[RMDB]
RNA sequence: GGGAACGACUCGAGUAGAGUCGAAAAAGGCACUUCGCAAUGUGUGCUCUAACAUUGCUUAUUCAAACACGCUUCACAAUGUGCGACAAAGAAACAUUGUUAUAAGAGCUAAUGUUUUAACAUUGGCAAAACCGAGUUAGCUUCGGCUAACUCGGAACAACCGUACCCGGUUCGCCGGGUACGGUUGAAAAGAAACAACAACAACAAC
Reactivity to 2A3 in 0.01 (KOAc 150mM, MgCl2 10mM, bicine 150mM(pH8.5), 24C), signal-to-noise 3, nucleotides 027 to 156: a010g190g000c000a010c010u010u010c020g000c000a000a010u000g010u000g010u000g000c060u040c060u180a000a000c000a020u000u000g020c020u120u170a270u140u230c130a060a080a040c080a010c040g020c000u000u010c010a000c000a030a000u010g010u010g000c010g050a050c160a080a130a020g060a030a050a010c000a010u000u010g040u060u030a180u040a070a150g040a000g020c020u000a010a000u000g040u020u130u050u220a120a020c000a000u000u000g010g000c000a000a050a000a030c000c000g010a000g000u000u000a000g010c000u080u090c280g010g000c000u000a000a000c000u000c010g000g000a000a000

Record summary:
This 207-nucleotide RNA was probed chemically with 2A3. As a SHAPE reagent, 2A3 marks flexible, mostly unpaired nucleotides at the ribose 2'-OH.